Description:
This 207-nucleotide RNA was probed chemically with DMS and 2A3. DMS adducts were read by reverse transcription with MarathonRT. The DMS profile rests on 2,446 reads. Source: RMDB library M2RFPK, as collected in RNAgym.

[RMDB]
RNA sequence: GGGAACGACUCGAGUAGAGUCGAAAAUAGCGAAGUAGGAUUUUAUGCGUCAAGUGUUCACAGGCUGGGGAGUCGCCGUGAAACGAAAAGCAUAAAGCGUGCUGCUUACGAUAUAAUUUCCGCACCCAUAAGAAGUCUCUGUUCGCAGAGACUUCAACCGGAAUAGUUAGUUCGCUAACUAUUCCGGAAAAGAAACAACAACAACAAC
Reactivity to DMS in 0.01 (KOAc 150mM, MgCl2 10mM, bicine 150mM(pH8.5), 24C), signal-to-noise 1, nucleotides 027 to 156: u010a050g030c040g010a030a030g000u010a050g020g020a140u000u000u000u010a010u010g010c000g010u000c070a070a300g000u020g000u000u000c020a010c000a160g050g010c030u020g020g020g040g010a080g010u000c010g040c000c000g010u000g030a000a070a040c010g020a100a050a070a060g030c050a020u000a000a010a040g030c140g020u000g020c010u000g000c020u000u020a040c050g020a080u000a010u000a060a210u000u010u010c010c000g010c000a190c000c000c000a270u000a040a170g010a020a030g010u000c000u000c000u000g020u000u000c300g020c020a000g000a020g000a010c000u000u000c010a080a050
Reactivity to 2A3 in 0.01 (KOAc 150mM, MgCl2 10mM, bicine 150mM(pH8.5), 24C), signal-to-noise 4, nucleotides 027 to 156: u080a000g020c010g030a020a000g010u050a020g040g120a060u030u010u010u010a010u020g000c010g010u090c110a100a060g010u080g120u190u020c020a020c070a100g000g010c000u140g060g000g000g090a070g100u120c030g010c010c000g010u010g010a020a010a000c010g030a060a020a040a020g000c010a010u000a010a030a000g090c060g030u070g080c000u000g000c000u010u030a110c030g010a000u010a010u020a100a140u050u050u020c010c010g000c040a070c020c050c010a050u080a170a070g000a000a000g000u000c000u000c000u010g030u040u060c170g010c050a000g000a000g000a000c000u000u000c000a000a010